[RMDB]
RNA sequence: GGGAACGACUCGAGUAGAGUCGAAAAAGGAAAAUGUGGGCCUUGGCAUCCAGGAGGAAUCGAUCUCGUCCCUAUGACGACUUUGGAGGAAGCUUUAGGUGUUUCCCAGGUAACAAACGAUGAUGACACCGUGAAAUAACUUCGGUUAUUUCACGGUAAAAGAAACAACAACAACAAC
Reactivity to 2A3 in 0.01 (KOAc 150mM, MgCl2 10mM, bicine 150mM(pH8.5), 24C), signal-to-noise 2, nucleotides 027 to 126: a000g120g020a120a050a020a050u200g020u060g030g040g040c020c000u020u020g020g000c020a040u030c010c020a010g040g040a060g020g060a080a030u030c020g040a090u010c040u000c040g040u060c050c020c040u110a120u210g010a020c030g020a010c020u080u070u070g110g000a070g030g020a040a000g020c000u100u120u090a050g000g000u050g050u020u020u030c010c010c010a000g050g020u070a060a020c050a040a120a020c100g070a070u190g010a040u120g030a060c010
Reactivity to DMS in 0.01 (KOAc 150mM, MgCl2 10mM, bicine 150mM(pH8.5), 24C), signal-to-noise 3, nucleotides 027 to 126: a040g000g000a050a040a070a080u000g030u000g020g000g020c040c010u010u000g010g000c040a070u010c010c090a060g010g020a060g010g010a150a100u010c050g000a040u020c060u000c040g000u010c000c160c140u000a070u010g010a070c060g010a040c060u000u000u000g010g010a060g000g010a090a180g010c050u000u010u000a050g020g010u000g010u000u000u000c020c000c020a130g010g010u000a050a060c110a040a060a100c110g000a070u000g000a060u000g000a170c180
Structure probing data (2A3 and DMS) for a 177-nucleotide construct. 2A3 adducts were read by reverse transcription with SuperScript II with manganese. It was measured as part of the RMDB library OK2TST. The 2A3 profile rests on 1,898 reads. The reactions ran in a buffer of 150 mM KOAc, 10 mM MgCl2 and 150 mM bicine (pH 8.5), at 24 C.